The record gives the reactivity of an RNA of 177 nucleotides to DMS and 2A3. Source: RMDB library OK1LIB, as collected in RNAgym. Reactivities are given for positions 27 through 126. Conditions: 150 mM KOAc, 10 mM MgCl2 and 150 mM bicine (pH 8.5), 24 C. For DMS, 901 sequencing reads were counted. DMS adducts were read by reverse transcription with MarathonRT.
[RMDB]
RNA sequence: GGGAACGACUCGAGUAGAGUCGAAAAGAGAUAUUAACUCUAAAUUAACUGUCUAAUUCAUUAGAGUUGAUGCAACUGAGUGACUAAACUACUUACAAUUGACAGUAUCAAAGAUCGUGAAAUGUUCCUCAUGCUGAGCUUUCGAGCUCAGCAUGAGAAAAGAAACAACAACAACAAC
Reactivity to DMS in 0.01 (KOAc 150mM, MgCl2 10mM, bicine 150mM(pH8.5), 24C), signal-to-noise 1, nucleotides 027 to 126: g010a270g010a040u040a090u000u010a000a040c050u000c000u000a000a000a090u000u040a000a000c000u080g000u020c000u000a020a010u000u010c300a050u000u000a000g000a030g000u000u010g000a040u000g000c010a150a020c070u000g020a240g010u020g000a080c090u020a040a020a300c050u070a000c070u000u000a040c130a040a050u000u000g000a060c050a040g020u000a070u050c060a030a170a000g050a020u010c040g030u020g000a030a060a010u020g000u000u000c090
Reactivity to 2A3 in 0.01 (KOAc 150mM, MgCl2 10mM, bicine 150mM(pH8.5), 24C), signal-to-noise 3, nucleotides 027 to 126: g060a010g000a010u080a020u190u020a020a010c000u000c020u050a020a020a100u110u110a040a090c040u040g070u050c120u190a100a040u150u060c130a110u140u080a020g000a000g010u000u030g040a080u040g000c070a120a140c050u100g010a030g110u060g050a020c000u070a100a090a040c060u180a050c080u110u090a090c130a110a190u040u120g020a020c000a010g050u040a050u150c090a200a070a000g040a030u110c030g030u100g140a060a070a080u120g020u000u020c000